RNA sequence: GGGAACGACUCGAGUAGAGUCGAAAACGUGUUAAGUCUUCUCGUCUAUUAGCGACAGAUAAGGCGUUCAAAGGAUGCGAUUGUAGCUGAGAUAUGUAUGGACAGGAGCUCCUUGGCAGGUGGUACGCCAUGCUGGUUCAUUCGUGAACCAGCAUGGAAAAGAAACAACAACAACAAC
Reactivity to 2A3 in 0.01 (KOAc 150mM, MgCl2 10mM, bicine 150mM(pH8.5), 24C), signal-to-noise 2, nucleotides 027 to 126: c050g030u010g020u120u080a050a030g050u080c010u010u010c010u030c030g010u000c060u040a090u030u140a090g030c030g010a000c030a070g050a050u090a080a000g050g000c010g000u020u000c060a010a010a010g040g000a030u040g000c010g020a070u000u140g030u070a040g020c020u000g130a050g000a050u170a030u210g050u050a090u090g040g020a000c000a030g030g000a010g000c020u000c000c000u000u000g010g000c000a010g010g050u050g000g060u060a030c020g020
Reactivity to DMS in 0.01 (KOAc 150mM, MgCl2 10mM, bicine 150mM(pH8.5), 24C), signal-to-noise 1, nucleotides 027 to 126: c070g000u000g020u010u000a040a070g020u000c060u010u000c020u010c080g000u010c000u010a130u010u000a070g000c070g030a050c030a050g000a010u000a070a100g000g000c030g030u000u000c050a090a110a060g010g000a070u000g010c040g020a220u030u020g000u000a100g000c000u000g000a080g000a120u020a070u050g000u020a090u000g000g000a000c000a040g000g020a160g000c020u010c020c010u000u000g020g010c010a010g010g000u000g030g000u010a090c070g010
Annotation
Chemical mapping of a 177-nucleotide RNA with 2A3 and DMS. For DMS, 3,375 sequencing reads were counted. It was measured as part of the RMDB library OK1LIB.